[RMDB]
RNA sequence: GGGAACGACUCGAGUAGAGUCGAAAAUUUUGAGUUUUCUAAGUGUCUCAUGAUGAAAUUUCAUAGGGCAGAUUCUGAGAUGGGAAUUGAAUUCAUCACUGAUAAAUAUUCUGUGAAAUCUGAAGACUAAUGUUACUAUCUUCGGAUAGUAACAUUAAAAAGAAACAACAACAACAAC
Reactivity to 2A3 in 0.01 (KOAc 150mM, MgCl2 10mM, bicine 150mM(pH8.5), 24C), signal-to-noise 6, nucleotides 027 to 126: u070u080u040u100g100a050g020u050u040u020u000c030u040a100a100g070u030g040u070c010u000c030a050u100g070a030u050g070a050a110a140u080u050u010c010a010u020a020g020g000g000c020a020g030a160u100u000c000u040g060a040g020a130u060g040g000g090a090a120u180u130g050a110a120u080u040c000a020u020c020a010c060u030g010a010u040a090a100a010u130a060u100u030c010u000g010u000g010a000a010a070u020c060u050g060a090a020g000a020c030
Reactivity to DMS in 0.01 (KOAc 150mM, MgCl2 10mM, bicine 150mM(pH8.5), 24C), signal-to-noise 6, nucleotides 027 to 126: u010u020u020u010g000a140g010u010u000u010u020c010u000a100a140g010u010g000u000c010u000c060a080u020g010a120u010g010a080a080a070u010u010u000c010a020u000a040g010g000g020c140a040g000a160u010u010c020u010g000a080g010a040u000g010g010g010a070a130u030u030g000a110a210u020u010c010a010u000c010a050c040u000g000a020u010a040a080a110u010a050u010u010c010u010g010u000g000a010a040a030u000c060u010g000a080a050g000a090c080